The record gives the reactivity of an RNA of 207 nucleotides to DMS and 2A3. For DMS the reverse transcriptase was MarathonRT. For DMS, 4,548 sequencing reads were counted. For 2A3, 3,325 sequencing reads were counted. Source: RMDB library OK3TST, as collected in RNAgym.

RNA sequence: GGGAACGACUCGAGUAGAGUCGAAAAACAUCGUAGUCGACUAGUUAGUGUUAGCCGGCUGACGUGCGUACUGUGAUCAACGCGCCAUGGUCGUAGUAUCGGCGCUAGCAUCAACUACGAUUGGCUGGUUAGCCGUAGUUGCGGUACUAGUAUUGCGUCAGGAAGGAUACUUCGGUAUCCUUCCUGAAAAAGAAACAACAACAACAAC
Reactivity to DMS in 0.01 (KOAc 150mM, MgCl2 10mM, bicine 150mM(pH8.5), 24C), signal-to-noise 2, nucleotides 027 to 156: a070c050a070u010c080g060u000a020g030u000c060g010a060c060u010a050g020u000u000a110g010u020g020u000u000a030g040c030c010g030g030c000u000g020a030c020g000u000g000c020g000u000a050c050u000g020u010g020a230u000c020a080a050c060g040c000g040c030c030a140u010g050g000u000c050g030u000a120g020u000a040u000c000g010g020c000g040c000u010a090g000c030a060u000c050a060a020c020u000a020c000g020a080u000u000g030g000c050u000g000g040u020u000a080g010c000c020g010u000a050g010u010u000g020c010g030g010u000a040c020u000a090g000u000a070u000u000g010c050g020
Reactivity to 2A3 in 0.01 (KOAc 150mM, MgCl2 10mM, bicine 150mM(pH8.5), 24C), signal-to-noise 5, nucleotides 027 to 156: a000c050a050u080c030g020u000a020g050u050c050g010a010c030u030a020g070u130u050a020g030u060g030u230u020a020g030c030c000g000g000c000u010g010a020c010g020u080g030c040g020u080a100c090u170g050u100g130a080u090c070a070a040c060g000c000g000c040c020a190u300g090g000u030c100g040u050a120g040u100a070u130c080g020g000c020g000c030u020a030g000c010a010u020c000a000a040c000u030a010c010g210a250u020u020g010g000c020u030g000g000u020u050a010g010c020c000g020u050a040g020u020u050g050c050g030g010u040a020c030u000a000g060u030a080u080u160g010c060g020